This 207-nucleotide RNA was probed chemically with 2A3.
The data come from the RNA Mapping Database (RMDB), library OK3TST.
For 2A3 the reverse transcriptase was SuperScript II with manganese.
The reactions ran in a buffer of 150 mM KOAc, 10 mM MgCl2 and 150 mM bicine (pH 8.5), at 24 C.

[RMDB]
RNA sequence: GGGAACGACUCGAGUAGAGUCGAAAAUGAACUGUUAGGUCUAACACAUUGGACAACGACACCUAAUUUUUAUUACUACUCUAUAUAUAAUUACACAAGUGAGAGGACUCGUGGCACUGCAAUUGACAGUAACGAUGUUGAUUGUGAACCUGUCAUACCCUACAGCUGAAUUCGUUCAGCUGUAGGGAAAAGAAACAACAACAACAAC
Reactivity to 2A3 in 0.01 (KOAc 150mM, MgCl2 10mM, bicine 150mM(pH8.5), 24C), signal-to-noise 2, nucleotides 027 to 156: u080g000a040a010c020u030g000u000u050a110g060g040u030c120u090a120a000c080a010c030a270u190u240g100g020a050c040a220a060c080g040a060c040a120c050c040u060a140a170u100u090u110u050u040a120u250u040a060c000u000a000c020u000c060u000a060u020a040u020a020u080a300a270u300u300a120c040a000c000a030a160g050u070g050a050g020a010g010g080a090c020u070c180g090u050g000g010c050a010c100u000g000c010a000a100u050u020g000a000c000a020g050u110a090a040c110g020a060u060g010u010u030g080a250u020u040g000u030g080a060a070c000c020u010g020u020c010a020u010a020